Background:
An RNA of 177 nucleotides, treated with DMS and 2A3 and read out base by base.
RNA sequence: GGGAACGACUCGAGUAGAGUCGAAAAGCAAGAUGCUUCGGCAUCUUGCAGUCGUAGCGCGAUCGACAGAAUUACAGCUAAGUCGAACGAGGAAGAGCGCGCACAUCAUCCCUUUCGAGGGAUGAAAGUUGAGUCAUAUAUUCGUAUAUGACUCAACAAAAGAAACAACAACAACAAC
Reactivity to DMS in 0.01 (KOAc 150mM, MgCl2 10mM, bicine 150mM(pH8.5), 24C), signal-to-noise 9, nucleotides 027 to 126: g000c000a000a000g010a010u000g010c000u000u010c200g030g010c000a010u000c000u000u000g010c000a040g010u000c040g020u000a070g020c010g020c000g010a110u000c000g010a030c010a060g010a130a090u000u010a090c300a120g010c100u000a100a110g010u000c010g000a030a090c060g010a130g020g000a070a060g000a120g000c000g010c000g020c020a090c220a130u000c000a010u000c000c000c000u000u000u010c140g010a020g010g010g010a000u000g000a010a050a090
Reactivity to 2A3 in 0.01 (KOAc 150mM, MgCl2 10mM, bicine 150mM(pH8.5), 24C), signal-to-noise 9, nucleotides 027 to 126: g000c000a000a010g000a000u010g000c010u060u130c240g100g000c000a000u000c000u000u000g000c000a000g040u020c040g030u040a030g000c010g000c010g010a040u030c010g010a010c010a020g150a110a050u270u160a160c070a090g070c090u180a190a020g010u020c010g020a030a040c040g030a080g120g100a060a050g030a020g090c010g000c000g010c010a010c000a050u030c000a000u000c000c000c000u010u030u040c210g090a020g000g000g010a000u000g010a030a020a000

For 2A3, 37,282 sequencing reads were counted. The data come from the RNA Mapping Database (RMDB), library M2PK50. For 2A3 the reverse transcriptase was SuperScript II with manganese. For DMS, 23,106 sequencing reads were counted.